RNA sequence: GGGAACGACUCGAGUAGAGUCGAAAACAAAAGCCCAAUGGCUGAUUUGGUUAAGUAAUGCGGAGGGUUUCGGCUUACCUCCGGUGGAAGCACAGUCGGUAGGCACUGGGGUGAUAUACGCAGACCACACGCCACAACGAUUCGUCGUUGUGGCGUGAAAAGAAACAACAACAACAAC
Reactivity to DMS in 0.01 (KOAc 150mM, MgCl2 10mM, bicine 150mM(pH8.5), 24C), signal-to-noise 1, nucleotides 027 to 126: c110a070a070a130a120g010c040c000c110a110a150u020g030g020c010u010g020a030u000u010u010g010g000u000u010a060a130g010u000a090a100u040g030c000g000g000a100g000g000g000u020u000u010c130g000g000c020u000u000a160c020c010u000c040c010g000g020u000g000g010a100a060g000c010a110c060a000g000u000c070g020g010u000a060g010g000c030a040c040u000g000g010g010g000u040g000a060u010a100u010a060c120g020c050a190g000a150c040c080a130